[RMDB]
RNA sequence: GGGAACGACUCGAGUAGAGUCGAAAACGUAGAUACAAAUUUCGAAGGUUGCAUUCUUCGCUCUACCCUAAUGUGCAUAGCAUACGCUAAGAAAUACAAAUCUAUGAACAACAACUCAAAAGUUGAGACGUCUUCUCAAAUUCGUUUGAGAAGACGUAAAAGAAACAACAACAACAAC
Reactivity to DMS in 0.01 (KOAc 150mM, MgCl2 10mM, bicine 150mM(pH8.5), 24C), signal-to-noise 2, nucleotides 027 to 126: c040g030u020a010g000a010u000a020c110a140a100a100u000u000u000c050g020a240a110g020g000u000u010g030c050a120u000u000c000u010u010c160g020c050u000c050u000a150c080c090c030u060a060a060u020g020u020g000c050a120u010a010g010c060a050u000a040c140g000c050u030a030a230g020a120a010a000u020a070c090a060a080a050u000c030u020a000u000g000a090a040c070a100a080c050a050a060c080u000c120a100a080a080a090g050u000u000g000a120g000
Reactivity to 2A3 in 0.01 (KOAc 150mM, MgCl2 10mM, bicine 150mM(pH8.5), 24C), signal-to-noise 2, nucleotides 027 to 126: c000g010u040a020g010a010u080a120c130a040a300a080u050u080u080c020g030a050a000g080g050u030u030g000c030a080u080u080c020u110u040c120g000c020u030c030u050a110c040c020c010u160a190a090u190g050u040g060c020a030u080a040g000c010a030u070a190c080g020c180u060a110a000g050a040a010a010u080a060c080a010a100a030u000c000u030a020u130g060a020a010c040a020a020c010a010a060c040u100c160a020a100a120a090g030u020u050g040a080g050